[RMDB]
RNA sequence: GGGAACGACUCGAGUAGAGUCGAAAAACUGUAUUUCUCAGCUCUGUCUUGCAGAUGGAGGAACAGUAGUACAGAGAAGUUGAAUGACUUAGCCAAGGUCUUGUAGCUAGUUGAGUCUGGUUCUGUGACUGUGAGGGAGGGGAAUGAACCUCAAAUACGUGGUACCUGAUUUCGAUCAGGUACCACGAAAAGAAACAACAACAACAAC
Reactivity to 2A3 in 0.01 (KOAc 150mM, MgCl2 10mM, bicine 150mM(pH8.5), 24C), signal-to-noise 1, nucleotides 027 to 156: a010c030u000g030u010a020u000u030u030c020u000c020a050g010c000u000c010u000g010u020c040u070u230g050c060a030g000a070u080g010g010a000g010g040a010a010c000a030g040u010a020g040u000a000c000a010g000a000g080a080a050g030u090u080g170a150a130u040g020a020c030u000u110a070g040c010c010a070a060g040g000u070c030u130u070g120u070a030g020c020u000a010g050u000u080g090a080g040u000c040u140g000g030u050u010c030u040g040u090g010a110c080u010g030u050g050a030g090g060g000a060g030g070g040g000a000a030u210g080a000a080c020c000u070c030a000a000a050u190a040
Reactivity to DMS in 0.01 (KOAc 150mM, MgCl2 10mM, bicine 150mM(pH8.5), 24C), signal-to-noise 1, nucleotides 027 to 156: a000c000u010g010u000a220u020u000u000c010u000c020a040g030c010u020c000u030g030u000c010u000u000g000c170a270g010a050u000g000g000a100g040g000a110a130c060a080g000u000a100g020u000a060c020a070g000a200g010a150a060g000u000u010g030a140a050u000g000a070c050u000u010a030g000c030c010a030a030g010g020u000c110u020u010g020u000a070g000c040u000a040g010u000u010g000a080g020u010c030u000g030g020u020u000c050u000g080u000g000a130c060u010g070u010g000a040g000g060g010a110g000g000g000g030a140a090u000g010a100a080c010c020u000c020a020a100a140u000a040
Record summary
Chemical mapping of a 207-nucleotide RNA with 2A3 and DMS. For DMS, 1,634 sequencing reads were counted. DMS adducts were read by reverse transcription with MarathonRT. Source: RMDB library OK3TST, as collected in RNAgym. 2A3 adducts were read by reverse transcription with SuperScript II with manganese.